An RNA of 177 nucleotides, treated with DMS and 2A3 and read out base by base. 2A3 adducts were read by reverse transcription with SuperScript II with manganese. For 2A3, 888 sequencing reads were counted. For DMS, 1,095 sequencing reads were counted.

[RMDB]
RNA sequence: GGGAACGACUCGAGUAGAGUCGAAAAUGAGAUCCAUUGAAAUUUUGCCGAAUGCUUGAACCGCAUCUACAUGAAAAUGUGCCUUAGGAUAAUUUUUUAUAACUUUAGCCAUUUGUGGAAUAGGCUGCUUCGUAUCCUUGUUCGCAAGGAUACGAAGAAAAGAAACAACAACAACAAC
Reactivity to DMS in 0.01 (KOAc 150mM, MgCl2 10mM, bicine 150mM(pH8.5), 24C), signal-to-noise 1, nucleotides 027 to 126: u000g020a060g000a120u010c030c030a050u010u000g010a070a080a140u000u000u000u010g020c010c030g010a140a060u010g000c020u030u010g000a110a080c110c110g000c040a110u010c030u010a070c060a070u010g000a070a070a070a000u000g030u000g010c020c010u000u010a030g010g010a050u000a010a030u000u000u000u010u010u000a010u010a100a160c020u000u020u000a070g000c000c000a020u000u000u000g010u000g010g010a070a070u000a130g000g000c030u000g010
Reactivity to 2A3 in 0.01 (KOAc 150mM, MgCl2 10mM, bicine 150mM(pH8.5), 24C), signal-to-noise 1, nucleotides 027 to 126: u140g010a070g010a090u010c000c000a020u030u180g070a120a060a060u080u090u110u090g080c000c060g010a050a020u100g030c030u000u060g030a030a040c060c000g000c020a030u020c020u030a020c000a040u140g150a170a020a100a100u020g010u050g010c000c000u000u000a020g020g010a000u040a090a050u120u120u050u010u000u120a180u080a260a110c030u010u040u100a020g020c040c010a050u100u000u020g120u040g060g010a040a080u040a020g020g000c000u020g000